[RMDB]
The record gives the reactivity of an RNA of 207 nucleotides to 2A3. It was measured as part of the RMDB library M2RFPK.
RNA sequence: GGGAACGACUCGAGUAGAGUCGAAAAAGCCGAGGACUACGGUCCUCGGCAACAACCGUCACAACGGCUUCCUGGCGUGACGGGGUUAACCCCAACGGAGCAAGUGCGUGCUUACGAGCUCGCACAAUUUAGGAGAAUUCCUUCGGGAAUUCUCCAACAUUCCACCACUGUUCGCAGUGGUGGAAUGAAAAGAAACAACAACAACAAC
Reactivity to 2A3 in 0.01 (KOAc 150mM, MgCl2 10mM, bicine 150mM(pH8.5), 24C), signal-to-noise 2, nucleotides 027 to 156: a000g000c010c000g000a010g000g010a000c040u070a030c300g090g000u000c010c000u000c010g040g140c010a000a000c000a000a010c020c000g030u000c000a000c010a050a080c070g080g000c000u260u150c010c010u070g050g000c040g000u000g000a000c010g000g000g000g000u130u270a110a100c000c000c000c010a050a100c150g030g010a000g000c040a160a110g000u010g000c000g020u010g010c000u030u020a050c230g080a020g000c000u010c010g000c000a000c000a010a010u120u100u180a080g000g010a000g000a000a000u000u000c010c010u010u070c200g020g000g000a000a000u000u000c000u000c000c000a010a000
For 2A3, 1,211 sequencing reads were counted.